[RMDB]
RNA sequence: GGGAACGACUCGAGUAGAGUCGAAAAGAUAUGGACCUCCAAUUAUCGAGGAUCUGUCGGUGGUCGGAAACGACCACCGAGCAGGGAGAUAAGGAGGUCCUAAGUCAAACUACUGUUCGCAGUAGAACAUGAUUGAUAAGUUCGCUUAUCAAUCAUGAAAAGAAACAACAACAACAAC
Reactivity to 2A3 in 0.01 (KOAc 150mM, MgCl2 10mM, bicine 150mM(pH8.5), 24C), signal-to-noise 6, nucleotides 027 to 126: g020a020u070a040u140g000g000a000c010c010u000c020c040a180a300u160u020a000u020c020g010a300g060g070a100u040c010u000g040u050c000g010g000u000g000g010u000c010g000g030a080a080a050c010g000a000c010c010a000c000c000g000a000g000c000a000g010g040g020a080g000a010u010a020a050g010g000a000g020g000u000c000c000u000a010a000g000u000c010a000a030a040c010u030a000c010u010g050u100u110c300g000c140a010g000u010a010g010a040a050
Reactivity to DMS in 0.01 (KOAc 150mM, MgCl2 10mM, bicine 150mM(pH8.5), 24C), signal-to-noise 8, nucleotides 027 to 126: g000a040u010a300u010g010g010a010c000c000u010c000c000a200a200u000u000a010u000c000g010a110g020g010a050u010c000u000g010u000c010g010g020u000g020g010u000c010g010g000a060a090a190c010g010a020c000c000a010c010c000g000a020g010c000a010g000g000g010a050g010a020u000a020a090g010g010a010g000g000u000c000c000u000a010a090g010u000c030a150a130a240c010u000a010c010u000g010u010u020c230g020c010a020g000u000a000g000a120a290

The data come from the RNA Mapping Database (RMDB), library TTRDES. The record gives the reactivity of an RNA of 177 nucleotides to 2A3 and DMS. DMS adducts were read by reverse transcription with MarathonRT. Values cover nucleotides 27 to 126. For 2A3 the reverse transcriptase was SuperScript II with manganese.